[RMDB]
An RNA of 177 nucleotides, treated with DMS and 2A3 and read out base by base. The RNA was probed in 150 mM KOAc, 10 mM MgCl2 and 150 mM bicine (pH 8.5) at 24 C. For 2A3 the reverse transcriptase was SuperScript II with manganese.
RNA sequence: GGGAACGACUCGAGUAGAGUCGAAAACUCCUUAAACAACCACGUGGCGUUAAAGGAGCAACUAUUGAUAUGCAUCAAUUGCAUGAAGAUCUUGAGACAAUUGUAACUGAUGAAAGUUUUAAUAUUCCGAGCUAAAUCUUUUCGAAGAUUUAGCUCGAAAAGAAACAACAACAACAAC
Reactivity to DMS in 0.01 (KOAc 150mM, MgCl2 10mM, bicine 150mM(pH8.5), 24C), signal-to-noise 1, nucleotides 027 to 126: c010u020c010c000u000u000a170a030a020c010a060a300c000c000a150c240g030u020g010g050c270g010u000u000a070a010a030g030g010a020g040c080a080a040c140u010a080u000u010g000a090u000a080u000g000c000a020u000c050a040a060u000u000g000c010a000u000g000a120a100g000a130u010c040u000u000g000a150g000a030c030a050a060u010u000g000u000a000a000c010u000g000a050u000g000a060a070a120g000u000u000u000u000a000a090u000a030u000u000c060
Reactivity to 2A3 in 0.01 (KOAc 150mM, MgCl2 10mM, bicine 150mM(pH8.5), 24C), signal-to-noise 1, nucleotides 027 to 126: c000u020c010c030u010u000a050a040a000c000a040a030c050c060a160c300g110u250g120g020c000g000u000u030a000a000a020g000g000a000g000c050a000a030c030u130a050u060u110g090a080u050a010u260g060c010a000u040c000a000a080u040u000g000c010a030u040g000a100a060g020a140u020c060u260u300g110a260g000a180c060a050a010u020u060g010u020a030a000c000u000g040a030u030g090a120a060a190g010u060u020u040u170a160a060u100a080u130u050c090